[RMDB]
RNA sequence: GGGAACGACUCGAGUAGAGUCGAAAAGGAUGGGAAAGCAUGCGAAUCGUGCGGCACGCCGUACGGAAACCAUCCGGCCUUAUGGCGAUCUAAGCCGGUAAGCCUAGGCCGGAGUUGGUUCGUUCCGAGGAUGGGAAAGCAUGCAUCAGCCUCGGCGCACUCAAGUGGCGUUCGCGCCACUUGAGUGAAAAGAAACAACAACAACAAC
Reactivity to 2A3 in 0.01 (KOAc 150mM, MgCl2 10mM, bicine 150mM(pH8.5), 24C), signal-to-noise 1, nucleotides 027 to 156: g060g000a080u060g000g050g050a050a110a020g010c010a000u030g030c040g100a140a070u040c010g000u000g000c010g000g000c000a020c270g140c000c010g010u030a000c000g000g100a090a030a000c000c010a030u030c000c000g000g000c010c000u170u150a260u240g000g000c030g000a030u070c090u150a000a240g100c130c010g040g020u040a070a020g000c010c000u000a010g000g000c010c000g000g010a040g050u120u100g040g000u020u030c000g000u030u050c000c000g000a010g000g010a050u110g020g030g000a090a060a000g000c000a000u000g000c000a000u070c010a000g020c010c000u000c000g000g000c010g000